RNA sequence: GGGAACGACUCGAGUAGAGUCGAAAAAGGGUGUGCCAGAUUCUAAUAACAAUGUCUCGUUAUGAGAAGAGUCUGAGUUAGUAUUGUGGAUCUUAAUACUAACUAAUUCUAGGUCUACAGCACACCAGACAAUGGAUUCAUUCGUGGAUCUAUUGUCAAAAGAAACAACAACAACAAC
Reactivity to DMS in 0.01 (KOAc 150mM, MgCl2 10mM, bicine 150mM(pH8.5), 24C), signal-to-noise 9, nucleotides 027 to 126: a090g000g000g010u000g010u000g010c010c050a020g000a030u010u020c010u000a090a060u020a060a080c150a120a090u050g010u030c120u020c090g010u020u030a040u030g000a070g000a070a040g010a050g010u000c050u010g000a060g000u000u000a010g000u000a010u000u000g010u030g010g010a110u040c130u020u020a010a010u000a010c020u000a010a010c020u000a040a060u010u010c050u010a080g010g010u020c040u010a090c220a150g000c000a010c010a000c000c000a090
Reactivity to 2A3 in 0.01 (KOAc 150mM, MgCl2 10mM, bicine 150mM(pH8.5), 24C), signal-to-noise 9, nucleotides 027 to 126: a000g130g000g000u000g000u000g000c010c000a010g010a010u150u050c010u040a070a060u110a140a060c100a080a160u220g160u060c030u020c060g180u230u180a130u300g060a050g030a090a030g020a010g010u000c030u050g010a010g010u010u020a000g010u000a020u020u060g080u130g140g100a090u050c030u060u140a010a000u010a020c010u010a030a010c000u020a020a070u090u040c050u060a030g000g080u010c020u040a040c020a020g000c000a000c000a000c000c000a000
Source: RMDB library OK1LIB, as collected in RNAgym. The record gives the reactivity of an RNA of 177 nucleotides to DMS and 2A3. For DMS the reverse transcriptase was MarathonRT. The RNA was probed in 150 mM KOAc, 10 mM MgCl2 and 150 mM bicine (pH 8.5) at 24 C. For 2A3, 126,349 sequencing reads were counted.